RNA sequence: GGGAACGACUCGAGUAGAGUCGAAAAUUGGUGACUGAAGCAUUGGAUCGCCCGAGGAUGCUGUUCUCAGCCUCGAUGUAUCAUUCAUGCCUGAUGUCAGCUGGGAACCACCAUGGGCAUCUUCAAACUCGUCGUCAUCUGUGCUUUCAUUAGUGCCACUCGGAUCGUUAUUCGUAACGAUCCGAGUAAAAGAAACAACAACAACAAC
Reactivity to 2A3 in 0.01 (KOAc 150mM, MgCl2 10mM, bicine 150mM(pH8.5), 24C), signal-to-noise 3, nucleotides 027 to 156: u040u100g010g000u000g030a040c050u110g080a100a000g000c090a090u000u120g020g000a000u000c150g040c000c000c040g000a070g000g030a090u050g060c190u190g000u000u000c010u000c000a000g000c030c030u160c250g020a000u050g100u160a050u040c040a070u170u190c120a070u300g190c010c100u050g030a050u030g030u060c010a000g000c010u010g010g010g010a000a000c010c000a020c000c020a060u130g000g000g040c000a000u020c000u080u040c070a080a090a040c000u050c060g060u000c000g040u010c050a020u000c050u000g120u070g020c040u050u100u080c060a100u120u180a000g030u040g040c010c000

Background: An RNA of 207 nucleotides, treated with 2A3 and read out base by base. Reactivities are given for positions 27 through 156. The RNA was probed in 150 mM KOAc, 10 mM MgCl2 and 150 mM bicine (pH 8.5) at 24 C.